Description
Structure probing data (DMS and 2A3) for a 207-nucleotide construct. Reactivities are given for positions 27 through 156. The RNA was probed in 150 mM KOAc, 10 mM MgCl2 and 150 mM bicine (pH 8.5) at 24 C.
RNA sequence: GGGAACGACUCGAGUAGAGUCGAAAAGCCGCGGCAAGUGGAGUUAGCGAGAAGAGACUAGGCUUUGGUUUCUUCAAGUGAAGCGGUCACCAAUCAGGUGUGGUAGUUGCCGUAAAAAAUCCGGAUUAAUGCCUCAGCGCGUUCGCGCGCUGAGGAAUCAGACAUAAGAGUUCGCUCUUAUGUCUGAAAAAGAAACAACAACAACAAC
Reactivity to DMS in 0.01 (KOAc 150mM, MgCl2 10mM, bicine 150mM(pH8.5), 24C), signal-to-noise 1, nucleotides 027 to 156: g030c040c040g000c070g000g050c040a070a130g000u010g000g020a070g030u000u000a300g030c050g000a300g030a040a040g000a030g000a030c010u000a090g030g010c140u000u020u000g030g020u000u000u010c000u000u000c000a020a300g000u010g000a060a180g000c020g000g000u000c030a040c030c010a110a070u000c090a080g000g030u000g000u000g000g010u000a050g030u010u010g000c000c040g010u000a020a010a090a040a080a080u000c030c010g020g000a300u000u010a090a110u020g020c000c010u000c000a040g010c040g100c000g040u010u050c250g000c000g070c000g000c010u000g000a010g000g000a010a030
Reactivity to 2A3 in 0.01 (KOAc 150mM, MgCl2 10mM, bicine 150mM(pH8.5), 24C), signal-to-noise 2, nucleotides 027 to 156: g030c040c020g000c000g030g000c020a010a070g060u090g070g080a100g070u300u150a000g000c000g000a010g000a020a000g000a000g000a020c020u040a080g150g290c100u230u220u150g050g010u000u020u010c000u020u000c020a050a020g000u020g040a000a030g000c000g000g020u000c020a010c030c020a010a140u230c120a030g020g020u030g030u020g070g050u090a100g070u050u000g020c000c010g000u060a210a090a000a000a000a000u080c050c010g000g030a010u060u150a110a030u250g020c000c000u000c000a000g000c000g000c000g010u060u060c140g000c000g000c010g000c060u000g000a000g000g000a000a000